[RMDB]
RNA sequence: GGGAACGACUCGAGUAGAGUCGAAAACUAUUUAUAGACAGAACAGUGGAAAACGUAUAUCGCUAUAAACCUUAAACACCGAUUCUUCCAGUCGUACAAUUCCACAUAGGCGAGGCAUAAGCGAAAGCGGACGCAUAUGGUUCGCCAUAUGCGUCCGAAAAGAAACAACAACAACAAC
Reactivity to 2A3 in 0.01 (KOAc 150mM, MgCl2 10mM, bicine 150mM(pH8.5), 24C), signal-to-noise 2, nucleotides 027 to 126: c000u020a070u030u030u020a120u020a010g040a070c140a010g050a150a040c020a040g040u050g000g120a120a160a000a000c000g020u030a020u050a000u100c040g000c020u000a000u010a050a000a110c030c000u030u140a080a110a020c040a000c050c010g030a030u050u020c000u010u000c040c000a010g020u000c000g010u000a010c080a020a080u120u020c000c000a030c010a020u040a060g000g020c000g020a000g050g000c000a050u090a220a080g000c020g070a100a000a000g000
Reactivity to DMS in 0.01 (KOAc 150mM, MgCl2 10mM, bicine 150mM(pH8.5), 24C), signal-to-noise 1, nucleotides 027 to 126: c060u000a050u070u000u030a070u000a030g000a040c160a260g050a100a140c120a040g000u000g030g000a010a100a030a040c020g000u000a170u000a040u040c030g000c060u110a030u000a020a160a150c090c150u020u020a000a100a000c140a060c190c000g000a000u000u000c050u010u000c000c000a090g040u000c040g000u070a060c270a010a180u040u000c030c000a080c060a010u030a060g000g000c020g000a020g000g050c000a000u010a010a020g000c000g000a010a000a040g010